[RMDB]
RNA sequence: GGGAACGACUCGAGUAGAGUCGAAAAACUUGUAUAGGCGAUUAAUAAAUCUUCUGUAAAUGCUGUAAGAGUAUUACCCCUUGAGGUUUCAGCACUAGGCUGCUCUAGCGAUUAAUCAAUGCAUUUGUAACGGAAAGACAGUUCGCUGUCUUUCCAAGAUUUCUUCAGUGUUCGCACUGAAGAAAUCAAAAGAAACAACAACAACAAC
Reactivity to 2A3 in 0.01 (KOAc 150mM, MgCl2 10mM, bicine 150mM(pH8.5), 24C), signal-to-noise 1, nucleotides 027 to 156: a000c040u060u090g010u060a050u090a090g000g030c020g000a040u050u050a100a240u220a170a140a040u080c080u200u020c020u040g150u100a040a060a050u050g000c000u020g080u150a090a010g010a000g090u030a020u110u090a020c010c000c000c000u010u050g050a130g090g040u000u130u240c040a030g050c000a010c040u090a060g170g000c030u030g030c000u010c000u040a000g050c000g030a120u000u220a050a050u150c050a030a120u090g040c030a070u020u020u060g090u010a060a000c030g000g000a000a000a000g000a020c000a000g000u030u110c100g060c060u000g000u000c000u010u000u020c000c000a000a000

The record gives the reactivity of an RNA of 207 nucleotides to 2A3. It was measured as part of the RMDB library M2RFPK. Reactivities are rounded to 0.1 and cut off at 0 and 3.